[RMDB]
RNA sequence: GGGAACGACUCGAGUAGAGUCGAAAAGUUUAGAAGUUCGCUUCUAAACAAAUAGUUGGUACCUAUCAACCUUAUAUGUAGGUACCCAUGUAAGGUUGACAAAAACGUCCUCGUUCGCGAGGACGAACUUAAGCAUAAUCUUCGGAUUAUGCUUAAGAAAAGAAACAACAACAACAAC
Reactivity to 2A3 in 0.01 (KOAc 150mM, MgCl2 10mM, bicine 150mM(pH8.5), 24C), signal-to-noise 3, nucleotides 027 to 126: g000u010u000u000a010g010a020a000g020u040u130c180g080c120u000u000c000u000a000a000a000c000a000a140a010u120a010g130u090u180g090g040u130a100c000c000u030a050u060c000a000a020c000c000u020u010a010u000a000u020g100u080a070g150g180u140a100c020c010c000a010u010g020u010a000a020g000g020u000u020g010a020c060a010a090a010a030a030c000g010u000c000c000u000c000g050u060u050c250g020c000g130a020g010g010a000c010g000a000a000
Reactivity to DMS in 0.01 (KOAc 150mM, MgCl2 10mM, bicine 150mM(pH8.5), 24C), signal-to-noise 4, nucleotides 027 to 126: g010u000u010u000a010g000a010a010g010u000u020c270g020c010u000u000c000u000a000a010a010c000a040a110a050u000a100g020u010u000g010g000u000a100c040c020u000a100u000c010a010a010c000c010u000u000a000u000a000u010g000u010a120g010g010u010a040c180c110c010a000u000g000u000a010a000g010g000u000u000g010a020c190a020a060a040a080a130c010g000u000c000c000u000c000g020u000u010c190g020c020g000a010g010g000a000c010g010a010a040
The record gives the reactivity of an RNA of 177 nucleotides to 2A3 and DMS. In probing experiments dimethyl sulfate is read out at A N1 and C N3, which are open when not base-paired. The DMS profile rests on 5,615 reads. It was measured as part of the RMDB library M2PK50. The RNA was probed in 150 mM KOAc, 10 mM MgCl2 and 150 mM bicine (pH 8.5) at 24 C.